[RMDB]
RNA sequence: GGGAACGACUCGAGUAGAGUCGAAAACGAGGCCUACGUGCCCAAGCAGAACCUGUUCAGAGACAGGAGCGGCGAGGAGCCCGAGGAGAUGCGCGCCUCCCGCUUCCACGCGGGGCGGGAGCUGCGGCGCGGCCUGGACCGAAAGCGGGUGCUGAGGCAUAGACAGGGAGUUCGCUCCCUGUCUAUGAAAAGAAACAACAACAACAAC
Reactivity to 2A3 in 0.01 (KOAc 150mM, MgCl2 10mM, bicine 150mM(pH8.5), 24C), signal-to-noise 1, nucleotides 027 to 156: c070g020a130g060g000c000c090u110a070c030g070u120g020c000c000c000a020a000g000c010a030g020a100a110c000c020u030g000u080u100c090a060g020a050g070a160c020a010g000g040a000g030c000g020g000c020g020a030g050g030a060g030c080c030c030g070a030g040g010a150g030a080u210g000c000g000c010g000c020c000u010c000c000c000g000c000u010u000c030c020a170c170g090c300g000g000g000g000c000g000g020g010a020g000c060u090g020c030g100g000c000g000c000g000g020c010c020u000g020g000a040c000c030g100a150a000a000g000c010g000g020g000u050g020c060u150g030a030g000g000
Reactivity to DMS in 0.01 (KOAc 150mM, MgCl2 10mM, bicine 150mM(pH8.5), 24C), signal-to-noise 1, nucleotides 027 to 156: c030g010a100g000g000c000c020u000a130c100g000u020g000c020c000c050a070a180g070c040a110g000a050a140c000c000u010g000u000u000c070a300g020a220g000a050c020a040g000g000a070g040c050g000g020c020g040a170g020g000a190g000c030c030c030g000a040g010g010a130g000a110u030g020c020g000c010g000c050c020u000c000c000c010g000c000u000u000c000c010a050c280g020c150g000g000g000g000c000g050g030g010a000g000c020u000g040c000g010g000c030g050c020g030g010c000c040u010g020g000a000c010c000g000a080a060a120g020c300g030g000g010u000g020c020u000g000a180g010g010
This 207-nucleotide RNA was probed chemically with 2A3 and DMS. Conditions: 150 mM KOAc, 10 mM MgCl2 and 150 mM bicine (pH 8.5), 24 C. The 2A3 profile rests on 936 reads. As a SHAPE reagent, 2A3 marks flexible, mostly unpaired nucleotides at the ribose 2'-OH.